[RMDB]
RNA sequence: GGGAACGACUCGAGUAGAGUCGAAAAGCAUAGUUCGCUAUGCACCAACCGAUGAUGGCAACAGGGUAGCUACCGAAGUUGAUGUGGAAGCCGUUCCAGUCUGAGGAUGUCCAGUAUUCGUACUGGAGCCCUAUUACUGGUUCGCCAGUAAUAGGGCAAAAGAAACAACAACAACAAC
Reactivity to DMS in 0.01 (KOAc 150mM, MgCl2 10mM, bicine 150mM(pH8.5), 24C), signal-to-noise 2, nucleotides 027 to 126: g010c010a020u000a010g000u000u030c220g010c010u000a040u000g000c000a270c030c020a130a100c160c030g000a130u000g020a070u000g000g000c060a040a000c070a100g010g030g020u010a100g000c010u000a090c040c050g020a060a060g000u000u010g000a100u010g010u000g010g010a080a090g000c050c020g000u000u000c020c030a070g000u020c080u000g030a120g010g010a140u000g010u020c000c020a010g020u000a020u000u010c230g010u000a000c000u000g000g000a080
Reactivity to 2A3 in 0.01 (KOAc 150mM, MgCl2 10mM, bicine 150mM(pH8.5), 24C), signal-to-noise 3, nucleotides 027 to 126: g000c000a020u000a010g040u060u120c290g000c090u010a000u010g020c020a020c020c030a060a040c030c010g020a030u080g020a000u070g040g020c020a040a010c070a100g020g090g030u040a030g040c030u060a050c010c010g040a150a050g070u130u140g080a190u090g020u010g070g060a030a010g030c010c000g000u030u000c010c020a050g080u050c030u080g030a060g090g030a050u130g100u040c000c000a000g010u010a030u070u100c120g020u040a030c010u010g000g000a010